RNA sequence: GGGAACGACUCGAGUAGAGUCGAAAAGACCGUAGCGCGAGCUACCAGUAAGAAGUAGAGGAAGCCGAUGUUCCGUCGUACGUUUUGAAAAACGAACCAGGGAGUGUGUCUGAUUGGCGAGUCUAACCUCGGUUCGAAAAUUCGUUUUCGAACCGAGAAAAGAAACAACAACAACAAC
Reactivity to 2A3 in 0.01 (KOAc 150mM, MgCl2 10mM, bicine 150mM(pH8.5), 24C), signal-to-noise 2, nucleotides 027 to 126: g180a040c010c020g010u000a000g010c050g020c060g020a000g080c000u050a030c000c000a020g010u040a140a080g050a100a000g040u140a010g020a070g010g030a180a000g000c000c010g020a050u050g030u050u030c020c010g060u020c040g000u080a010c010g000u020u030u080u150g140a120a100a010a000a010c050g000a060a000c010c030a020g030g000g000a050g030u110g010u030g040u070c080u090g080a190u060u050g000g030c030g010a020g000u010c010u000a020a020c000
Reactivity to DMS in 0.01 (KOAc 150mM, MgCl2 10mM, bicine 150mM(pH8.5), 24C), signal-to-noise 3, nucleotides 027 to 126: g020a070c030c070g020u000a000g000c000g000c170g000a150g000c000u070a010c010c090a110g020u020a060a080g000a080a110g020u010a060g000a040g010g020a110a190g000c060c040g000a080u020g000u000u000c000c010g000u020c290g030u020a050c020g000u000u000u020u010g030a070a080a040a050a040c050g000a040a050c020c050a070g000g010g000a070g000u000g020u000g010u020c100u000g010a080u000u000g010g000c140g020a250g010u000c010u000a090a110c180
Chemical mapping of a 177-nucleotide RNA with 2A3 and DMS. It was measured as part of the RMDB libraries RFM100 and RFMREP. 2A3 adducts were read by reverse transcription with SuperScript II with manganese. Reactivities are rounded to 0.1 and cut off at 0 and 3.